[RMDB]
RNA sequence: GGGAACGACUCGAGUAGAGUCGAAAAUCAUCCAAGUUCGCUUGGAUGAAACGGAACUGAAGCUAAAAACGAUCCGAGGCAACAGUACCAUAAAAGGAUCGACAGCCUGCAAAUUCGUUUGCAGGAACCUACCACAACAUUUCGAUGUUGUGGUAGGAAAAGAAACAACAACAACAAC
Reactivity to 2A3 in 0.01 (KOAc 150mM, MgCl2 10mM, bicine 150mM(pH8.5), 24C), signal-to-noise 4, nucleotides 027 to 126: u020c000a000u000c000c000a010a000g010u020u090c190g020c110u000u010g010g010a000u000g010a010a010a000c040g030g040a040a020c020u040g020a060a010g010c040u110a130a050a030a060a080c020g000a010u000c010c000g030a050g040g000c010a080a020c000a080g020u090a120c020c000a010u140a050a100a010a040g000g000a010u000c010g030a030c020a030g090c000c000u000g000c000a020a010a030u050u070c180g080u050u000u000g000c000a010g000g000a000a000
Reactivity to DMS in 0.01 (KOAc 150mM, MgCl2 10mM, bicine 150mM(pH8.5), 24C), signal-to-noise 4, nucleotides 027 to 126: u000c000a000u000c010c010a000a040g000u000u020c140g040c010u000u000g010g000a020u000g000a010a070a060c130g000g020a130a040c020u000g000a040a300g000c030u000a050a040a070a090a060c010g020a010u000c000c020g030a130g000g000c000a020a300c020a020g020u000a140c060c020a070u000a040a040a140a060g000g010a020u010c020g020a300c200a120g000c000c000u010g000c000a000a010a020u000u010c240g020u000u000u000g010c000a030g000g000a040a040